[RMDB]
RNA sequence: GGGAACGACUCGAGUAGAGUCGAAAAAGGGGAUGGAGAUAUGGAAAGGGUCUCGUGUGCUGUCAGUCGGUCGAAAGACGCGCUUGCAACAUGGGCCUAUAACCGGAUAAGUCAUAGCAAUACUAGCAAGGUAUCACGUUUUCGAACGUGAUACCUUAAAAGAAACAACAACAACAAC
Reactivity to DMS in 0.01 (KOAc 150mM, MgCl2 10mM, bicine 150mM(pH8.5), 24C), signal-to-noise 3, nucleotides 027 to 126: a100g040g000g000g000a080u000g000g000a110g000a040u030a120u010g030g000a020a120a180g020g000g000u000c010u050c030g060u040g000u010g000c040u000g020u020c300a050g030u020c060g000g000u010c040g000a070a060a130g000a020c000g000c040g020c000u040u010g000c050a020a050c030a100u010g000g020g010c000c040u000a040u020a160a100c060c060g000g040a150u030a080a050g000u010c050a020u000a060g040c070a080a040u040a110c090u000a060g000c210
Reactivity to 2A3 in 0.01 (KOAc 150mM, MgCl2 10mM, bicine 150mM(pH8.5), 24C), signal-to-noise 2, nucleotides 027 to 126: a000g100g000g000g000a000u000g100g000a030g000a000u070a010u140g000g070a030a100a110g000g000g070u030c060u020c160g000u000g010u010g000c020u020g030u060c030a010g000u030c040g060g010u000c000g060a000a000a080g000a010c010g050c040g000c300u030u000g000c000a070a040c000a070u080g000g000g020c000c010u080a050u020a060a060c030c010g040g010a020u070a040a060g010u100c020a040u150a020g000c060a060a050u080a180c020u030a050g040c030